RNA sequence: GGGAACGACUCGAGUAGAGUCGAAAACGUCCGGCAGAUCAGCGAGGAUCUGUCCAAGCCGUUGCCCGUCAGGCUGACGGCCACGCUCAACCGCAAGGGCUCGCUCGAGCUGUCGGGCAACGUGACAAUCGUCAGGGAUGUUCGCAUCCCUGACGAUAAAAGAAACAACAACAACAAC
Reactivity to DMS in 0.01 (KOAc 150mM, MgCl2 10mM, bicine 150mM(pH8.5), 24C), signal-to-noise 2, nucleotides 027 to 126: c120g020u010c020c080g010g000c000a000g000a030u000c010a190g040c240g010a160g000g010a040u000c010u000g030u010c010c170a100a120g000c080c010g010u000u000g000c040c000c000g000u000c070a020g010g000c050u000g000a080c070g000g000c010c070a010c250g000c030u010c060a140a150c240c170g000c120a100a210g000g010g000c030u010c160g020c170u000c060g010a050g030c000u000g000u000c020g010g000g000c000a000a010c010g010u000g010a100c090a090
Reactivity to 2A3 in 0.01 (KOAc 150mM, MgCl2 10mM, bicine 150mM(pH8.5), 24C), signal-to-noise 1, nucleotides 027 to 126: c050g060u040c000c000g000g000c020a010g010a010u010c010a000g170c070g160a120g210g130a050u000c010u000g020u000c000c020a020a060g020c020c020g010u000u000g040c000c030c040g030u040c040a010g140g280c020u060g020a060c010g000g000c000c000a060c040g000c000u040c100a080a220c070c020g000c050a060a050g100g000g030c100u120c050g010c050u040c030g040a000g000c010u000g000u010c010g030g000g010c000a000a000c020g020u030g010a010c050a040